[RMDB]
RNA sequence: GGGAACGACUCGAGUAGAGUCGAAAAUUCAUCAAUACGUGCUAUUUCGCAAAAAGUAGAAGAAGGGGGGCACGACAUUAGUAUUGCUACGCAAGACUUAAUGAAGUAUUUAACUUCAGCGUAUAAAGGUACUCUCAACUUUCGAGUUGAGAGUACCAAAAGAAACAACAACAACAAC
Reactivity to DMS in 0.01 (KOAc 150mM, MgCl2 10mM, bicine 150mM(pH8.5), 24C), signal-to-noise 1, nucleotides 027 to 126: u010u000c070a080u010c040a140a110u010a050c040g010u000g020c040u000a050u010u000u000c120g000c300a080a080a140a000a020g010u000a010g000a180a080g020a020a010g000g010g000g000g000g050c100a030c040g000a200c000a010u000u010a040g000u020a040u000u000g010c000u000a130c240g000c010a010a030g000a060c030u000u000a030a010u000g000a040a270g000u000a020u000u000u000a050a040c000u000u010c020a290g010c030g030u000a010u000a060a100a190
Structure probing data (DMS) for a 177-nucleotide construct. Conditions: 150 mM KOAc, 10 mM MgCl2 and 150 mM bicine (pH 8.5), 24 C. DMS adducts were read by reverse transcription with MarathonRT. Source: RMDB library OK2TST, as collected in RNAgym.